[RMDB]
RNA sequence: GGGAACGACUCGAGUAGAGUCGAAAAUUUUCAGCUUCUUCUUGAGAUAUAACAUUUUUAAUUGUCGCAUCAAUUGAAACACUUAAUUUAGGACUUUCUGAGUCUGAAUCAUCUUCUAGUCUCACUGCGAAUUCUCUUCCUUCGGGAAGAGAAUUCGAAAAGAAACAACAACAACAAC
Reactivity to 2A3 in 0.01 (KOAc 150mM, MgCl2 10mM, bicine 150mM(pH8.5), 24C), signal-to-noise 2, nucleotides 027 to 126: u110u130u080u010c010a060g020c010u160u050c020u110u060c010u060u110g030a000g020a070u130a010u100a210a070c140a230u000u030u020u010u170a100a060u090u020g020u000c030g090c000a070u050c040a080a020u010u020g040a050a000a000c100a050c020u080u060a130a140u200u130u060a120g040g070a040c000u120u150u060c140u300g100a010g010u000c000u070g040a100a020u010c050a060u020c020u060u000c030u050a020g040u030c020u000c040a100c090u030g010
The record gives the reactivity of an RNA of 177 nucleotides to 2A3. It was measured as part of the RMDB library OK1LIB.